An RNA of 177 nucleotides, treated with DMS and 2A3 and read out base by base. The reactions ran in a buffer of 150 mM KOAc, 10 mM MgCl2 and 150 mM bicine (pH 8.5), at 24 C. For DMS the reverse transcriptase was MarathonRT. For 2A3, 7,444 sequencing reads were counted. Values cover nucleotides 27 to 126. For DMS, 11,827 sequencing reads were counted. Source: RMDB library OK2TRN, as collected in RNAgym.

[RMDB]
RNA sequence: GGGAACGACUCGAGUAGAGUCGAAAAGACCAGGCAGCUCUCAGUGGGGCCCUGGGCAGUUGGAACCUGAACACCUUUCCAAGGACUGCAGGGCGUGAGGCUGGGGCACGCCGAGCUGGGAUCUGGGUCCAUGAAUGAGAUUCGUCUCAUUCAUGGAAAAAGAAACAACAACAACAAC
Reactivity to DMS in 0.01 (KOAc 150mM, MgCl2 10mM, bicine 150mM(pH8.5), 24C), signal-to-noise 7, nucleotides 027 to 126: g010a180c020c000a070g000g000c020a060g010c030u000c010u000c190a100g020u010g010g010g000g010c010c000c010u000g010g010g020c020a030g010u010u010g000g000a090a080c100c030u010g000a110a120c140a110c050c020u000u000u010c120c150a100a070g000g010a160c100u000g000c020a070g010g000g010c040g030u000g010a130g000g000c020u000g000g000g010g010c020a040c040g020c020c050g010a060g010c020u000g010g000g010a100u010c010u000g000g000g010
Reactivity to 2A3 in 0.01 (KOAc 150mM, MgCl2 10mM, bicine 150mM(pH8.5), 24C), signal-to-noise 4, nucleotides 027 to 126: g030a030c000c010a000g030g010c010a010g000c010u010c010u010c060a030g020u080g020g170g150g000c000c010c020u030g000g070g040c010a030g020u160u210g100g030a060a050c010c020u020g030a090a040c060a080c050c020u030u130u100c090c090a040a020g070g020a100c050u110g020c040a010g020g020g000c050g090u190g080a090g140g000c020u010g010g000g000g000c030a010c030g030c020c010g000a010g010c030u030g000g010g070a040u030c010u030g030g030g030